[RMDB]
RNA sequence: GGGAACGACUCGAGUAGAGUCGAAAAUACCCAUUCGUGGGUACUCGCACCUUUGUGAAAGACAUGCUCUACUGACUCGCACGAUCCCAUUGGGAUCGUGACCCGAGGAUGUAGAGCAACAGCUUUCACUCUGGUCCACCGACCGGUUCGCCGGUAAACGGACAUAUGACUUCGGUCAUAUGUCCGUAAAAGAAACAACAACAACAAC
Reactivity to 2A3 in 0.01 (KOAc 150mM, MgCl2 10mM, bicine 150mM(pH8.5), 24C), signal-to-noise 1, nucleotides 027 to 156: u040a000c000c000c000a010u020u100c280g100u050g000g040g020u060a090c040u080c150g070c000a000c020c000u010u030u010g000u000g020a000a000a000g010a110c020a120u040g040c000u020c040u000a010c000u090g150a020c000u020c000g020c000a000c020g010a000u000c000c000c050a040u100u300g010g000g000a000u000c000g010u000g010a000c050c060c040g010a010g020g000a020u170g000u010a000g010a000g020c000a020a000c000a000g000c020u010u000u000c000a000c000u000c000u000g020g010u020c000c010a140c000c020g160a050c000c000g030g020u070u070c190g060c130c000g000g030u040a210a050